[RMDB]
RNA sequence: GGGAACGACUCGAGUAGAGUCGAAAACUUGAAGAGCACAAGGUUCAAGAAGAAUCAAUUCUUAAUGCAGUGUGUGUAUGGACCUCUGGCCUGUGUUUUUCAGAGAGGGCGGUAGGUACAGACCUCGAUUCCGUGCAGACAUGACCAAGAGAGGAGACACUCGUGAUCAGUUCGCUGAUCACGAGUGAAAAGAAACAACAACAACAAC
Reactivity to 2A3 in 0.01 (KOAc 150mM, MgCl2 10mM, bicine 150mM(pH8.5), 24C), signal-to-noise 3, nucleotides 027 to 156: c020u020u090g020a040a000g000a010g020c010a000c010a090a140g020g000u140u100c090a080a040g080a030a050g030a050a180u060c060a050a140u170u050c070u130u200a130a120u150g000c050a070g000u030g000u040g000u030g010u140a110u110g020g040a030c010c000u030c020u030g060g040c020c020u030g000u000g030u040u060u010u020u030c020a020g050a010g020a040g040g000g040c050g040g040u080a030g010g030u060a110c030a070g100a120c010c000u000c060g030a020u090u000c030c020g030u030g020c020a000g010a130c020a060u080g030a050c070c010a050a010g030a000g000a030g090g010a040g040a010
Reactivity to DMS in 0.01 (KOAc 150mM, MgCl2 10mM, bicine 150mM(pH8.5), 24C), signal-to-noise 1, nucleotides 027 to 156: c020u000u000g000a090a090g010a060g030c010a090c030a120a110g010g010u000u000c050a130a030g000a080a130g000a140a080u010c100a060a120u000u000c080u000u010a090a120u000g000c030a070g010u000g040u000g020u000g040u020a100u000g040g020a030c050c020u010c060u030g010g040c010c050u050g000u020g010u000u000u000u000u000c100a070g020a230g020a090g000g060g010c100g000g000u010a000g020g030u000a090c000a080g000a040c040c000u000c010g000a110u010u010c030c000g000u000g050c100a070g000a130c100a040u010g010a130c020c040a000a050g020a150g020a140g000g000a230g010a300